RNA sequence: GGGAACGACUCGAGUAGAGUCGAAAAAGGAAAGCAAAGAAAGCAACGGGGCUAGCCGGUGGGUGUUCCUCCCCCCGAGAGGGGAAGAGUGAGGCUUAUCCCGGGGAACCCGGCGAAUGCCCCCACACAGGUAACGUGUUCGCACGUUACAAAAGAAACAACAACAACAAC
Reactivity to DMS in 0.01 (KOAc 150mM, MgCl2 10mM, bicine 150mM(pH8.5), 24C), signal-to-noise 9, nucleotides 027 to 129: a050g020g020a060a030a040g000c090a040a070a060g030a040a070a050g030c080a100a090c230g000g000g010g020c000u020a160g000c000c020g000g000u040g010g030g000u030g010u030u030c000c000u000c000c010c000c000c000c000g000a090g020a140g010g000g000g000a050a040g020a040g010u060g020a020g000g000c160u000u010a050u050c010c000c040g000g000g000g000a070a130c130c010c010g000g000c000g020a100a040u060g020c000c000c010c000c050a000c080a030c130a050g000
Reactivity to 2A3 in 0.01 (KOAc 150mM, MgCl2 10mM, bicine 150mM(pH8.5), 24C), signal-to-noise 9, nucleotides 027 to 129: a000g140g010a100a020a010g050c080a070a060a110g070a050a080a010g050c030a040a100c080g010g000g000g000c010u010a010g020c010c000g020g010u140g030g040g010u060g040u060u040c000c000u000c010c000c000c010c000c010g060a060g050a060g060g000g000g020a040a040g090a020g060u280g010a010g010g000c000u080u100a090u110c010c000c000g030g000g010g030a010a020c000c000c000g000g000c010g010a060a040u180g010c000c000c000c020c000a010c000a000c010a020g120
Structure probing data (DMS and 2A3) for a 170-nucleotide construct. It was measured as part of the RMDB library 15KLIB. DMS adducts were read by reverse transcription with MarathonRT. Conditions: 150 mM KOAc, 10 mM MgCl2 and 150 mM bicine (pH 8.5), 24 C. 2A3 adducts were read by reverse transcription with SuperScript II with manganese. For DMS, 63,692 sequencing reads were counted. High 2A3 reactivity points to a flexible backbone, as in loops and unpaired stretches.